Source: RMDB library RFM100, as collected in RNAgym. An RNA of 177 nucleotides, treated with 2A3 and DMS and read out base by base. For 2A3 the reverse transcriptase was SuperScript II with manganese. For DMS the reverse transcriptase was MarathonRT.
RNA sequence: GGGAACGACUCGAGUAGAGUCGAAAACCCAGCAGAGGGGUGAAAAUGCUCUGGAAUUGAGGCCCCUCUAACAAUAAUCCAAAACUACUUCGCAGAGUAAUCUGCCGAAUCGUAGGAUGCCCAUUACGGUUCACUUCCAAUUCGUUGGAAGUGAACCAAAAGAAACAACAACAACAAC
Reactivity to 2A3 in 0.01 (KOAc 150mM, MgCl2 10mM, bicine 150mM(pH8.5), 24C), signal-to-noise 2, nucleotides 027 to 126: c040c040c000a000g040c040a000g000a000g000g020g000g050u110g150a060a140a080a120u150g000c010u050c030u080g040g220a180a100u050u080g000a010g010g000c000c000c000c000u000c000u020a000a000c000a030a020u220a010a000u070c040c000a050a000a050a050c020u000a000c000u010u000c010g000c010a000g000a040g060u120a130a140u000c030u040g000c040c030g020a000a000u070c030g000u000a000g020g030a020u120g020c040c000c000a000u020u120a050c080
Reactivity to DMS in 0.01 (KOAc 150mM, MgCl2 10mM, bicine 150mM(pH8.5), 24C), signal-to-noise 1, nucleotides 027 to 126: c000c000c000a090g000c210a000g010a010g000g000g030g000u000g000a110a110a030a060u060g030c010u110c040u000g000g100a160a000u010u000g000a080g000g000c000c000c010c000u020c000u000a030a090c220a110a020u000a080a000u000c110c030a030a000a160a300c000u000a020c040u000u010c060g030c020a000g010a000g000u000a070a150u000c050u000g000c120c030g000a060a000u000c060g000u030a010g000g000a170u080g000c000c000c010a080u090u010a150c160